This 177-nucleotide RNA was probed chemically with 2A3 and DMS. For 2A3 the reverse transcriptase was SuperScript II with manganese. Source: RMDB libraries RFM100 and RFMREP, as collected in RNAgym.

RNA sequence: GGGAACGACUCGAGUAGAGUCGAAAAAUUGGGGUGUUUCGCGAGUGUGAGAGGGAAGCGCCGCGGCCUGUAUUUCUAGACCUGCCCUUCGCCUGGUUCGUGGCGCCUUGUGACCCCGGGCCCCUGCCGAGGUCUUGUAAUUCGUUACAAGACCUCGAAAAGAAACAACAACAACAAC
Reactivity to 2A3 in 0.01 (KOAc 150mM, MgCl2 10mM, bicine 150mM(pH8.5), 24C), signal-to-noise 4, nucleotides 027 to 126: a000u140u130g010g000g010g010u080g050u060u080u090c040g030c030g040a150g050u190g000u080g050a140g030a070g050g030g020a040a040g020c000g000c010c010g010c010g000g010c010c000u060g050u090a190u070u150u050c060u060a040g080a100c010c000u000g010c010c000c000u050u070c030g010c030c040u020g030g000u070u240c010g000u030g010g020c000g020c000c000u030u050g060u050g020a050c000c000c020c000g010g030g000c000c000c000c000u030g030c010
Reactivity to DMS in 0.01 (KOAc 150mM, MgCl2 10mM, bicine 150mM(pH8.5), 24C), signal-to-noise 2, nucleotides 027 to 126: a140u030u030g000g000g000g000u010g030u010u000u010c020g020c040g020a090g010u000g000u020g000a080g000a070g030g010g000a110a160g000c020g010c020c010g000c030g010g020c030c000u000g010u050a080u010u020u030c120u010a070g000a060c040c030u010g000c040c020c030u000u020c100g000c110c050u020g000g000u000u010c030g040u000g000g030c030g000c030c030u000u020g040u030g000a120c020c000c010c000g000g000g000c020c000c020c030u000g000c170